[RMDB]
An RNA of 177 nucleotides, treated with DMS and 2A3 and read out base by base. The reactions ran in a buffer of 150 mM KOAc, 10 mM MgCl2 and 150 mM bicine (pH 8.5), at 24 C.
RNA sequence: GGGAACGACUCGAGUAGAGUCGAAAACAACGAUGUUCAGGAAACAGUGAGAAAACGAACAUCUUUCACAGUUCAGUGAAGCGAUUACUGGGCGUCCUUUACUGUGCCUGUUUCUGCGUAGACAGAAUAGUCAGGAGGGAUUCGUCCCUCCUGACUAAAAAGAAACAACAACAACAAC
Reactivity to DMS in 0.01 (KOAc 150mM, MgCl2 10mM, bicine 150mM(pH8.5), 24C), signal-to-noise 1, nucleotides 027 to 126: c110a040a050c120g000a010u000g000u000u020c000a060g000g000a040a130a000c110a060g040u040g010a160g000a000a020a040a050c070g050a040a000c040a000u010c000u000u030u070c100a040c050a130g020u060u020c070a050g000u040g000a040a000g030c090g000a080u010u000a060c030u020g070g000g000c020g000u000c070c000u000u010u010a000c000u000g030u030g000c090c000u040g000u000u020u000c000u000g070c010g000u060a000g000a090c010a020g000a070a070
Reactivity to 2A3 in 0.01 (KOAc 150mM, MgCl2 10mM, bicine 150mM(pH8.5), 24C), signal-to-noise 3, nucleotides 027 to 126: c030a030a090c030g000a000u000g000u070u010c030a040g030g150a150a250a030c030a040g090u130g300a140g040a050a060a000a020c020g000a000a000c020a000u000c040u030u090u050c030a020c000a000g040u030u020c000a000g010u020g100a050a000g020c050g170a100u000u180a120c090u150g140g060g060c010g000u010c000c000u000u000u020a010c020u000g010u000g060c020c010u020g030u040u060u000c000u060g000c040g140u030a070g080a180c060a010g000a050a030
The 2A3 profile rests on 1,499 reads.